Chemical mapping of a 207-nucleotide RNA with 2A3. For 2A3 the reverse transcriptase was SuperScript II with manganese. The reactions ran in a buffer of 150 mM KOAc, 10 mM MgCl2 and 150 mM bicine (pH 8.5), at 24 C.
[RMDB]
RNA sequence: GGGAACGACUCGAGUAGAGUCGAAAACAGGCCUCUUCCCGCCCGUGGGGGAGAGUGUCCCGCGCUAUGGAUGCAGUUCAACGACUAAACGGUGAUGGGCUAGCGUAAUGAAUGCGUUCUGCACACUCUUACGCCGGCUUAAGAUAUAGUCUACUCCGCCCUGAUACUAGUUCGCUAGUAUCAGGGCAAAAGAAACAACAACAACAAC
Reactivity to 2A3 in 0.01 (KOAc 150mM, MgCl2 10mM, bicine 150mM(pH8.5), 24C), signal-to-noise 2, nucleotides 027 to 156: c030a000g000g000c010c000u040c000u000u020c030c000c020g100c000c020c000g040u130g030g000g000g000g000a020g010a020g010u060g020u130c020c020c010g070c000g000c020u130a130u300g100g030a090u130g040c080a050g030u070u120c040a100a070c080g030a020c000u070a170a000a000c030g000g040u020g000a060u180g000g020g000c010u010a010g000c010g000u000a020a040u050g060a190a300u000g000c090g070u300u140c060u230g000c010a000c000a000c000u000c010u000u000a000c010g000c000c000g010g000c000u020u010a000a000g050a010u080a020u050a090g000u070c010u060a080c000u040c050c040